[RMDB]
RNA sequence: GGGAACGACUCGAGUAGAGUCGAAAACAGGUUCGCGUGCGCGGGGACGACAGCGGGAAGAUCCUUGUAGUGGCGCAGAUAAACAAGUUGACGAACCGCGUCCUUUUGACGGGAACGGGCGAGCGAGCCCUAGGCAAUUAUUCGUAAUUGCCUAGGGAAAAGAAACAACAACAACAAC
Reactivity to DMS in 0.01 (KOAc 150mM, MgCl2 10mM, bicine 150mM(pH8.5), 24C), signal-to-noise 9, nucleotides 027 to 126: c080a120g010g010u000u000c030g020c050g010u000g010c060g020c060g000g010g000g010a070c050g010a080c120a110g010c050g000g010g010a080a150g010a140u000c020c020u000u000g020u000a090g020u010g010g010c030g020c050a070g010a110u010a080a090a070c090a040a060g000u000u010g010a110c060g000a180a140c020c010g000c040g010u010c020c050u010u000u010u000g010a090c080g000g000g010a110a120c040g000g010g010c050g000a120g000c070g010a160g010
Reactivity to 2A3 in 0.01 (KOAc 150mM, MgCl2 10mM, bicine 150mM(pH8.5), 24C), signal-to-noise 4, nucleotides 027 to 126: c020a030g000g100u060u050c030g020c040g110u100g040c030g000c020g010g020g010g000a010c030g030a030c060a030g030c040g010g020g000a040a040g040a110u040c010c020u030u030g050u050a090g040u040g100g010c050g000c040a020g030a120u170a020a060a010c040a060a020g060u100u100g120a040c020g020a040a020c000c000g010c030g010u040c010c000u050u110u070u160g100a040c040g020g010g000a040a060c010g020g040g020c010g010a030g020c030g010a030g020